[RMDB]
Annotation:
Source: RMDB library OK1LIB, as collected in RNAgym. The record gives the reactivity of an RNA of 177 nucleotides to 2A3 and DMS. For 2A3 the reverse transcriptase was SuperScript II with manganese. The RNA was probed in 150 mM KOAc, 10 mM MgCl2 and 150 mM bicine (pH 8.5) at 24 C.
RNA sequence: GGGAACGACUCGAGUAGAGUCGAAAAGCAGAGUGAUCGACAGCCGCAAAAGCGUGAAACCCACCAUCAUUGAGGAAGGUGAUGGAAGAGUCAUCCUGGGGGAACCCUCAGCCAUCACGGCUGCCAGAGAUCACCUUCCUUUCGAGGAAGGUGAUCUAAAAGAAACAACAACAACAAC
Reactivity to 2A3 in 0.01 (KOAc 150mM, MgCl2 10mM, bicine 150mM(pH8.5), 24C), signal-to-noise 4, nucleotides 027 to 126: g060c030a030g070a020g070u030g040a080u070c030g040a060c040a020g030c000c000g030c060a010a120a060a060g050c030g050u130g090a160a040a040c000c010c010a000c010c010a020u050c010a010u060u170g090a090g150g080a180a070g010g000u020g000a010u020g020g010a060a060g040a020g080u080c030a020u050c030c020u030g000g040g000g010g060a070a060c000c000c000u000c010a010g000c000c000a080u150c060a010c080g030g000c000u010g040c040c030a080g000
Reactivity to DMS in 0.01 (KOAc 150mM, MgCl2 10mM, bicine 150mM(pH8.5), 24C), signal-to-noise 2, nucleotides 027 to 126: g000c060a130g020a150g020u030g000a100u000c000g000a070c100a090g000c010c000g000c160a070a010a150a060g010c060g000u030g000a030a100a100c090c020c020a180c010c000a010u000c010a020u000u050g000a050g010g000a150a060g000g020u000g010a010u000g000g000a150a050g000a020g010u000c030a060u000c010c000u000g010g010g000g000g040a050a050c070c000c000u030c040a070g040c000c000a070u060c160a140c130g000g020c000u000g010c150c070a110g010